Structure probing data (2A3 and DMS) for a 207-nucleotide construct.
For 2A3, 4,698 sequencing reads were counted.
For DMS the reverse transcriptase was MarathonRT.
The reactions ran in a buffer of 150 mM KOAc, 10 mM MgCl2 and 150 mM bicine (pH 8.5), at 24 C.
2A3 adducts were read by reverse transcription with SuperScript II with manganese.

RNA sequence: GGGAACGACUCGAGUAGAGUCGAAAACUAGGGUGUGUUCGCACACCCUAGAAAAGAUAUGGAAGCGUUGUGACAUGAUUUCUCGUCGGAAACGACGAAUAAUCAACAGCACACUGCGCUUCCUAAGUCAAAAGGGAAACACCUUCGGGUGUUUCCCCAAAAUAGGCUUGUUCGCAAGCCUAUUUUGAAAAGAAACAACAACAACAAC
Reactivity to 2A3 in 0.01 (KOAc 150mM, MgCl2 10mM, bicine 150mM(pH8.5), 24C), signal-to-noise 4, nucleotides 027 to 156: c010u010a010g000g010g000u010g000u000g020u050u080c230g100c070a010c000a000c000c000c000u000a000g000a000a010a000a020g000a000u010a000u030g000g000a000a010g000c020g010u030u020g010u020g030a090c110a300u300g010a020u020u020u020c110u010c030g000u000c000g000g000a000a000a000c000g000a000c000g000a010a000u050a010a000u010c040a040a300c060a130g130c070a000c000a000c020u010g000c000g000c010u000u000c000c000u000a000a000g000u000c020a000a060a100a070g020g000g010a010a000a000c010a000c000c020u100u150c300g090g000g000u000g000u000u000u010c000c000c000
Reactivity to DMS in 0.01 (KOAc 150mM, MgCl2 10mM, bicine 150mM(pH8.5), 24C), signal-to-noise 2, nucleotides 027 to 156: c010u000a010g010g040g050u000g050u000g030u000u010c300g070c000a030c020a010c010c000c000u000a000g010a020a050a120a180g020a060u000a050u010g010g000a020a020g040c000g050u000u000g040u010g030a100c020a280u000g010a020u000u000u000c100u000c000g030u000c010g000g000a020a020a060c000g020a050c000g000a010a000u000a010a020u000c000a250a190c130a100g000c090a070c000a060c020u000g000c000g020c000u020u040c010c000u000a000a060g000u000c010a030a050a160a170g050g020g000a020a010a000c010a010c000c000u000u010c300g070g010g070u010g010u000u000u000c010c000c000